[RMDB]
RNA sequence: GGGAACGACUCGAGUAGAGUCGAAAAGGGUCCGUAACGGUUUCGACAGGUUGGCGAACGCUACUCUGUGAUUCAGGUCGAGAGUGAGUCUCCUCUCGCAAAUCAAGGCUCAAAACAAAAGUAAAUGCGAAUAACAUCGUUAAAUUUGCUCGUAAGGCUAUCUUAAACACUUCGGUGUUUAAGAUAGAAAAGAAACAACAACAACAAC
Reactivity to 2A3 in 0.01 (KOAc 150mM, MgCl2 10mM, bicine 150mM(pH8.5), 24C), signal-to-noise 7, nucleotides 027 to 156: g060g010g030u040c030c010g020u040a080a040c050g040g040u030u060u050c040g070a020c010a030g010g050u050u040g050g000c050g060a140a030c130g020c040u020a020c030u040c020u080g030u030g040a060u080u060c020a050g070g070u080c010g000a000g000a000g010u020g000a010g010u010c150u150c180c010u000c000u000c010g150c200a000a020a000u020c020a010a000g000g000c000u000c020a040a080a010a010c030a010a090a010a000g050u060a010a030a020u050g010c010g010a020a010u070a090a030c030a070u020c010g010u010u060a040a180a070u020u020u020g010c020u030c070g100u090a050a020g100g000
Reactivity to DMS in 0.01 (KOAc 150mM, MgCl2 10mM, bicine 150mM(pH8.5), 24C), signal-to-noise 3, nucleotides 027 to 156: g000g030g020u020c000c050g050u010a060a060c050g020g000u000u010u000c050g060a120c060a060g020g010u010u000g010g000c030g000a060a090c050g020c010u000a040c040u000c020u010g040u010g020a100u010u010c060a110g030g050u000c020g010a060g020a030g010u000g010a200g010u000c060u010c050c020u010c000u010c040g050c060a040a050a080u010c040a080a110g030g000c030u010c000a050a060a130a150c090a040a080a060a100g010u010a050a040a020u000g000c000g010a110a150u000a070a050c100a090u000c040g020u000u000a040a070a130u000u000u010g000c040u000c000g000u000a020a090g010g000